[RMDB]
RNA sequence: GGGAACGACUCGAGUAGAGUCGAAAAAGGAGAAGGAACGGUAGAAAAGAGCGAGCCCUCCGAUCCGAUGGGGCCCUGGACCCCUCAGCUCUGGAGACUUCCGACCUGUGAGGUCGAGGAUUCCCCGAUGCUCGAAUGUUCGCAUUCGAGAAAAGAAACAACAACAACAAC
Reactivity to DMS in 0.01 (KOAc 150mM, MgCl2 10mM, bicine 150mM(pH8.5), 24C), signal-to-noise 9, nucleotides 027 to 129: a020g030g010a040g000a060a070g010g000a020a040c110g000g000u040a040g030a060a060a060a060g030a090g000c050g000a080g000c070c040c020u000c010c020g010a070u030c060c030g030a080u000g010g010g000g000c300c030c020u010g030g020a080c000c000c000c000u010c030a000g000c130u020c000u040g040g010a070g020a080c090u070u030c040c010g000a050c090c020u030g000u020g010a050g030g020u020c030g000a050g000g010a100u030u030c010c010c000c050g010a070u070g030
Reactivity to 2A3 in 0.01 (KOAc 150mM, MgCl2 10mM, bicine 150mM(pH8.5), 24C), signal-to-noise 9, nucleotides 027 to 129: a000g060g020a040g020a080a060g030g010a060a040c060g040g020u140a050g160a070a130a040a010g100a020g050c060g010a010g010c010c010c000u010c010c020g020a050u030c020c010g010a060u160g000g000g010g010c020c010c000u040g070g020a050c020c010c010c000u020c020a010g010c010u010c050u110g020g010a060g040a110c040u130u000c030c020g010a050c010c010u040g050u100g070a050g000g010u010c010g010a020g010g010a020u130u210c000c000c000c010g050a070u150g020